[RMDB]
RNA sequence: GGGAACGACUCGAGUAGAGUCGAAAAGACCGCUGAAUGCGGAAGUACUAGAUCAACUAGAAAGUAGAUUAAUACAAAAGCUACGUCUCGAAACUAGUUGAUCUAGUGCAAUCGAGACGUAGAAAGACGCACGCUAUAGUUUCGACUAUAGCGUGCGAAAAGAAACAACAACAACAAC
Reactivity to 2A3 in 0.01 (KOAc 150mM, MgCl2 10mM, bicine 150mM(pH8.5), 24C), signal-to-noise 2, nucleotides 027 to 126: g010a050c000c000g060c030u090g160a300a130u300g000c000g000g000a050a030g000u010a000c000u030a000g000a000u000c000a000a030c000u020a000g070a130a190a000g090u080a030g030a190u210u090a100a110u220a140c190a080a120a000a000g110c000u030a000c000g040u000c020u020c040g050a030a010a010c000u090a020g000u000u000g000a000u010c000u000a000g010u000g030c030a000a000u000c010g000a000g000a000c000g030u000a000g030a140a100a020g030a070
Reactivity to DMS in 0.01 (KOAc 150mM, MgCl2 10mM, bicine 150mM(pH8.5), 24C), signal-to-noise 1, nucleotides 027 to 126: g080a000c000c030g000c000u000g000a070a090u000g040c000g000g000a040a090g000u000a210c030u000a070g000a000u000c000a000a050c000u000a000g000a040a190a250g030u000a060g010a110u070u050a000a130u040a170c240a030a100a020a230g000c000u000a000c040g000u030c000u000c000g000a160a010a300c030u000a000g000u000u000g000a000u000c000u000a010g030u050g010c060a140a040u000c020g030a000g000a000c010g080u000a060g000a020a010a180g080a130
Chemical mapping of a 177-nucleotide RNA with 2A3 and DMS. DMS adducts were read by reverse transcription with MarathonRT. For 2A3 the reverse transcriptase was SuperScript II with manganese. The RNA was probed in 150 mM KOAc, 10 mM MgCl2 and 150 mM bicine (pH 8.5) at 24 C. The DMS profile rests on 1,079 reads. The data come from the RNA Mapping Database (RMDB), library OK1LIB.